[RMDB]
RNA sequence: GGGAACGACUCGAGUAGAGUCGAAAAUAGCGAAGUAGGAUAUUAUGCGUCAAGUGUUCACAGGCUGGGGAGUCGCCGUGAAACGAAAAGCAGAAAGCGUGCUGCUUACGAUAUAAUUUCCGCACCCAUAAGAAGUCUCUGUUCGCAGAGACUUCAAGUACGAAUUAUAGUUCGCUAUAAUUCGUACAAAAGAAACAACAACAACAAC
Reactivity to 2A3 in 0.01 (KOAc 150mM, MgCl2 10mM, bicine 150mM(pH8.5), 24C), signal-to-noise 9, nucleotides 027 to 156: u140a010g040c050g040a090a010g060u120a080g030g020a010u010a000u060u020a010u030g000c010g010u030c070a060a040g040u060g030u240u020c020a010c080a110g020g000c030u110g040g010g020g020a070g100u110c040g010c000c000g000u010g000a030a020a000c010g000a010a040a020a000g000c020a000g060a100a140a020g150c140g080u130g040c010u000g000c000u010u010a000c010g020a000u000a000u000a120a030u030u030u000c000c000g000c030a040c000c010c010a030u080a110a060g000a000a000g000u000c000u000c000u000g030u030u050c170g010c070a000g000a000g000a010c000u000u000c000a000a000
Reactivity to DMS in 0.01 (KOAc 150mM, MgCl2 10mM, bicine 150mM(pH8.5), 24C), signal-to-noise 3, nucleotides 027 to 156: u000a050g000c050g010a090a090g030u000a150g020g000a050u000a010u010u000a050u000g010c030g040u000c030a040a250g020u000g010u000u020c020a030c040a120g000g020c000u000g010g020g010g020a130g020u000c020g000c020c030g040u000g030a010a010a080c020g010a250a030a050a030g020c010a020g000a090a080a160g030c200g000u010g000c000u000g020c000u010u000a050c020g020a110u010a020u000a030a070u000u000u000c000c020g000c050a150c020c010c010a130u000a120a090g010a020a010g000u000c000u000c010u010g010u000u000c170g020c000a010g010a020g010a010c000u000u000c000a010a140